This 177-nucleotide RNA was probed chemically with 2A3 and DMS. The DMS profile rests on 1,207 reads. The 2A3 profile rests on 2,500 reads. The data come from the RNA Mapping Database (RMDB), library RFMREP. DMS adducts were read by reverse transcription with MarathonRT. Conditions: 150 mM KOAc, 10 mM MgCl2 and 150 mM bicine (pH 8.5), 24 C.

RNA sequence: GGGAACGACUCGAGUAGAGUCGAAAACGAUCAAACCUUCACCGGCUAAGGCUUCAGUAGCAGGACCCACGCAAAGAUUAUUUUUAACGCCAUCUUGCAUGUCUUUGUUACCGCCUUUACCAAUGCCCUUAUGCAAAUCGUUCGCGAUUUGCAUAAGAAAAGAAACAACAACAACAAC
Reactivity to 2A3 in 0.01 (KOAc 150mM, MgCl2 10mM, bicine 150mM(pH8.5), 24C), signal-to-noise 3, nucleotides 027 to 126: c030g060a060u150c070a060a080a080c000c020u130u080c060a050c110c060g000g020c040u030a010a010g020g000c020u160u090c080a040g010u030a010g020c010a000g020g000a010c020c050c040a060c100g010c000a030a100a050g000a040u020u050a100u030u300u050u120u200a120a040c130g000c040c010a010u000c010u020u020g010c020a030u040g030u000c030u140u270u070g000u000u000a000c000c020g060c000c000u020u010u030a020c000c000a030a060u130g050c040c030
Reactivity to DMS in 0.01 (KOAc 150mM, MgCl2 10mM, bicine 150mM(pH8.5), 24C), signal-to-noise 2, nucleotides 027 to 126: c080g010a090u010c130a050a130a110c100c050u000u000c040a110c110c050g010g040c120u010a040a050g010g050c020u000u000c300a050g020u000a030g020c020a070g010g000a030c020c150c210a040c100g010c040a020a020a090g000a030u000u010a100u010u020u020u010u000a030a120c170g010c180c200a010u000c030u000u010g000c030a040u000g000u000c020u000u010u020g030u010u000a020c020c110g000c020c000u000u000u010a110c030c030a050a100u000g000c100c050